About this RNA:
Conditions: 150 mM KOAc, 10 mM MgCl2 and 150 mM bicine (pH 8.5), 24 C. The record gives the reactivity of an RNA of 177 nucleotides to DMS. For DMS the reverse transcriptase was MarathonRT. The DMS profile rests on 625 reads. Values cover nucleotides 27 to 126.
[RMDB]
RNA sequence: GGGAACGACUCGAGUAGAGUCGAAAAGAUAUGGAACUCUCGCAAGGCGGAGAAGGGUCGGAAACGACCCGUAACGCUGAUGACCGAGGAGUUCCUAAGUCAAAAGCCGUUUGUUCGCAAACGGCAACACACGCGCUAAGUUCGCUUAGCGCGUGUGAAAAGAAACAACAACAACAAC
Reactivity to DMS in 0.01 (KOAc 150mM, MgCl2 10mM, bicine 150mM(pH8.5), 24C), signal-to-noise 1, nucleotides 027 to 126: g010a070u010a300u000g000g000a070a040c000u000c000u030c000g000c030a040a260g030g040c000g040g030a070g000a250a200g000g000g020u000c000g020g000a100a000a170c000g000a000c000c000c000g020u000a030a230c000g000c000u000g000a020u010g010a110c300c020g000a020g000g000a000g000u000u000c040c000u030a010a060g000u000c080a100a090a270a110g000c000c000g000u020u000u000g030u030u060c280g000c000a000a010a030c000g010g010c000a020a030